[RMDB]
RNA sequence: GGGAACGACUCGAGUAGAGUCGAAAAAUUUAUCUGUAUCCAGGAAUUAUAGGAGAUACAAAAUGCCGAGGAAUGCACUACUCAUGAUCUUUUUUGAUCCUUUUAACAAUCCAGAGACAUGGGCUGUGUAAAGCCACAGUGCAAAAUACAAUUAGGAUCAAUUGGAUGUUUUCGAACAUCCAAUUGAAAAAGAAACAACAACAACAAC
Reactivity to DMS in 0.01 (KOAc 150mM, MgCl2 10mM, bicine 150mM(pH8.5), 24C), signal-to-noise 1, nucleotides 027 to 156: a150u000u010u010a120u000c090u010g010u000a020u010c010c010a180g050g010a100a170u000u000a140u010a160g040g000a080g040a100u000a060c010a010a080a210a110u000g010c010c010g000a090g010g000a180a160u000g010c030a050c000u000a020c000u000c000a080u010g010a110u000c010u030u000u000u000u000u020g010a020u000c020c060u050u000u000u000a170a090c130a040a020u000c020c090a040g000a060g000a030c020a020u000g000g020g000c000u000g000u000g020u010a040a050a180g020c010c000a070c010a060g030u000g020c100a060a010a040a140u000a110c070a040a140u000u000a080g020g010a240
Reactivity to 2A3 in 0.01 (KOAc 150mM, MgCl2 10mM, bicine 150mM(pH8.5), 24C), signal-to-noise 2, nucleotides 027 to 156: a000u140u150u100a110u050c040u020g010u010a010u010c000c020a050g050g090a130a070u230u090a060u170a180g090g030a190g020a060u030a030c010a010a160a070a070u090g010c010c000g040a060g040g020a060a030u060g030c010a010c000u040a010c010u020c000a020u110g080a300u080c070u030u100u040u070u010u070g040a020u050c010c020u070u300u080u170a120a020c090a050a010u020c030c020a030g020a000g000a040c010a010u010g000g010g010c010u000g000u000g000u010a120a020a020g020c000c000a030c070a010g060u140g070c000a030a000a070a080u110a060c060a050a020u130u070a070g120g020a000